[RMDB]
The record gives the reactivity of an RNA of 177 nucleotides to 2A3 and DMS. DMS adducts were read by reverse transcription with MarathonRT. It was measured as part of the RMDB library RFM100. DMS (dimethyl sulfate) methylates the pairing face of unpaired adenines and cytosines.
RNA sequence: GGGAACGACUCGAGUAGAGUCGAAAACAUGGACCGCACAAUGAAGAUACGGUGCUUUUGUAUCGUACUUAUUGUUUCUGGUGCGCUGUUAACCGAGGUAAAUAAUAACCGGAGUCUCUCCGGCGACUCAUUGUCCCGGUUUCGACCGGGACAAUGAAAAAGAAACAACAACAACAAC
Reactivity to 2A3 in 0.01 (KOAc 150mM, MgCl2 10mM, bicine 150mM(pH8.5), 24C), signal-to-noise 3, nucleotides 027 to 126: c020a070u100g000g010a010c000c000g010c010a010c020a010a030u120g040a080a010g060a050u000a000c010g000g000u020g010c000u100u170u180u270g010u010a010u000c000g010u000a000c010u010u030a020u040u010g050u070u130u030c100u110g000g020u020g080c050g000c070u020g050u030u030a100a060c030c030g050a060g030g030u190a020a070a070u190a110a150u110a170a000c010c020g020g000a000g160u100c060u010c000u000c240c000g000g000c020g040a010c020
Reactivity to DMS in 0.01 (KOAc 150mM, MgCl2 10mM, bicine 150mM(pH8.5), 24C), signal-to-noise 2, nucleotides 027 to 126: c020a100u030g010g010a030c060c000g030c300a070c100a020a020u000g000a060a060g000a150u000a000c000g000g060u000g000c000u000u000u000u060g030u010a000u010c000g020u010a030c030u000u000a020u000u000g000u030u010u000c100u020g010g000u000g040c040g000c150u000g000u000u000a150a100c000c030g000a050g000g010u030a000a030a100u030a060a040u010a220a140c010c030g070g000a020g030u080c090u020c000u000c000c000g000g000c090g000a080c090
Reactivities are given for positions 27 through 126. Conditions: 150 mM KOAc, 10 mM MgCl2 and 150 mM bicine (pH 8.5), 24 C.